The record gives the reactivity of an RNA of 177 nucleotides to 2A3 and DMS.
For 2A3 the reverse transcriptase was SuperScript II with manganese.
The RNA was probed in 150 mM KOAc, 10 mM MgCl2 and 150 mM bicine (pH 8.5) at 24 C.
It was measured as part of the RMDB library OK1LIB.
RNA sequence: GGGAACGACUCGAGUAGAGUCGAAAACGCACGGCGGCGGCCUGGUUGGAGUUGCCUUCCACCGCUAUGCGCAGCUCGUUGAUGUAAGGGUGAAGGUUAAUGACCGACGUCAGCAUGUGUGCCGCGCUCAUUCCGUAAGUUUCGACUUACGGAAUGAAAAAGAAACAACAACAACAAC
Reactivity to 2A3 in 0.01 (KOAc 150mM, MgCl2 10mM, bicine 150mM(pH8.5), 24C), signal-to-noise 9, nucleotides 027 to 126: c020g010c000a010c020g030g010c010g020g000c000g010g040c040c040u130g010g000u010u030g040g010a070g020u030u030g050c000c000u010u020c020c020a020c010c020g030c100u060a120u170g020c030g000c030a080g030c040u100c130g080u070u060g050a180u080g040u110a150a160g090g000g000u050g030a020a020g060g010u090u150a080a040u130g040a040c010c010g010a010c000g020u020c010a080g000c090a160u110g020u000g020u030g050c000c020g080c010g000c020
Reactivity to DMS in 0.01 (KOAc 150mM, MgCl2 10mM, bicine 150mM(pH8.5), 24C), signal-to-noise 5, nucleotides 027 to 126: c080g010c020a030c020g000g010c020g000g010c010g000g020c110c040u030g030g000u000u000g010g010a260g000u010u010g010c020c020u020u010c070c060a050c030c010g020c090u010a060u020g010c050g000c050a090g010c110u030c160g000u030u010g000a090u010g010u020a080a090g010g010g030u000g000a070a060g010g010u000u030a040a040u020g000a040c010c000g000a050c030g000u000c030a090g010c010a040u010g010u010g010u000g010c020c020g000c110g020c110